Structure probing data (2A3 and DMS) for a 177-nucleotide construct. For DMS, 7,891 sequencing reads were counted. For DMS the reverse transcriptase was MarathonRT. It was measured as part of the RMDB library M2PK50.
RNA sequence: GGGAACGACUCGAGUAGAGUCGAAAAUUGAACGGAUUCGUCCGUUCAACGCGUGCGAUCCAAACGUAGUUCAAAAGUACAGACGAAAGCACAAGGAUCAAAUGAUACAGCCGUUCGCGGCUGUAAACGAUUAUCUUAUCUUCGGAUAAGAUAAUCGAAAAGAAACAACAACAACAAC
Reactivity to 2A3 in 0.01 (KOAc 150mM, MgCl2 10mM, bicine 150mM(pH8.5), 24C), signal-to-noise 5, nucleotides 027 to 126: u020u010g000a000a000c000g000g020a000u060u050c170g070u000c020c000g000u000u000c000a000a000c020g020c030g020u030g010c020g010a000u000c010c000a050a030a030c050g020u040a040g090u110u130c070a070a060a040a090g150u060a070c030a020g090a040c040g090a080a030a020g040c030a020c030a080a060g040g010a040u070c040a050a070a070u180g040a040u020a050c010a000g000c010c010g010u030u090c280g000c030g060g000c000u000g000u010a000a020a010
Reactivity to DMS in 0.01 (KOAc 150mM, MgCl2 10mM, bicine 150mM(pH8.5), 24C), signal-to-noise 7, nucleotides 027 to 126: u000u000g000a020a010c000g000g010a040u000u010c210g010u000c010c000g000u000u000c010a010a010c110g010c150g010u000g000c050g000a100u010c020c010a040a140a110c080g010u000a050g020u000u000c120a080a070a070a150g020u000a030c050a050g000a210c230g000a050a050a180g010c040a020c050a080a170g010g010a050u010c060a070a060a080u010g000a210u010a010c000a010g010c010c000g020u000u000c190g010c010g020g000c000u000g000u000a000a060a160